Conditions: 150 mM KOAc, 10 mM MgCl2 and 150 mM bicine (pH 8.5), 24 C. Structure probing data (2A3 and DMS) for a 177-nucleotide construct. The 2A3 profile rests on 5,151 reads. The DMS profile rests on 9,499 reads.
[RMDB]
RNA sequence: GGGAACGACUCGAGUAGAGUCGAAAAAAAUUGCCUCGUUAAACGCACCUGGCGUUGCAAAAUUAGUAUCCUUAAUAUGUUCGGUCCCAGUCUUAAUUUUAUCCAUAGGCAAAUAUUCACCAAUGACUAACUAUACAAGCUUCGGCUUGUAUAGUUAAAAAGAAACAACAACAACAAC
Reactivity to 2A3 in 0.01 (KOAc 150mM, MgCl2 10mM, bicine 150mM(pH8.5), 24C), signal-to-noise 6, nucleotides 027 to 126: a000a000a060u070u020g010c000c000u030c040g030u050u100a100a120a030c040g030c050a070c030c030u040g100g010c020g020u020u020g000c010a000a030a060a100u090u030a050g110u070a090u070c000c010u070u150a120a040u130a100u200g090u060u060c060g000g010u050c030c010c000a020g040u020c010u040u130a140a170u080u120u040u110a070u090c040c020a080u060a060g020g000c010a020a050a020u140a100u050u110c090a120c150c020a040a050u080g050a060c040
Reactivity to DMS in 0.01 (KOAc 150mM, MgCl2 10mM, bicine 150mM(pH8.5), 24C), signal-to-noise 4, nucleotides 027 to 126: a020a020a040u010u000g020c010c000u000c100g010u010u020a040a030a060c090g000c080a060c090c060u010g020g020c020g010u000u000g000c070a040a040a040a090u030u020a060g010u000a090u010c030c020u000u020a050a080u020a070u020g010u010u000c040g000g000u010c010c000c010a060g010u020c020u010u020a060a050u020u000u000u010a080u020c040c070a070u030a040g010g010c040a010a050a060u020a090u000u000c040a070c020c020a120a060u040g010a130c140
2A3 adducts were read by reverse transcription with SuperScript II with manganese. Values cover nucleotides 27 to 126.